[RMDB]
Chemical mapping of a 177-nucleotide RNA with DMS.

RNA sequence: GGGAACGACUCGAGUAGAGUCGAAAAGCAAAAGAUUAUCCAGGUGUAGCGGUGAAAUACGUAGAGAUCUGGUGGAUAAUGAACCGGUGGCGAAGGCGAAAGAUAACCGCUGAAAAGAAGAAUUGAAUCCCGUAUAUAUCUUCGGAUAUAUACGGGAAAAAGAAACAACAACAACAAC
Reactivity to DMS in 0.01 (KOAc 150mM, MgCl2 10mM, bicine 150mM(pH8.5), 24C), signal-to-noise 5, nucleotides 027 to 126: g030c110a060a050a090a070g010a090u000u010a060u010c020c020a060g020g040u000g020u010a090g020c040g020g010u010g000a050a080a110u000a060c070g010u010a080g010a110g010a050u000c020u000g010g010u000g010g000a060u000a080a070u000g010a080a070c070c030g010g020u000g000g010c120g010a090a100g000g000c020g000a040a070a060g000a080u000a110a060c040c010g020c020u000g000a040a010a070a100g010a080a080g000a080a100u000u010g000a080a150
It was measured as part of the RMDB library M2PK90.
Values cover nucleotides 27 to 126.
The RNA was probed in 150 mM KOAc, 10 mM MgCl2 and 150 mM bicine (pH 8.5) at 24 C.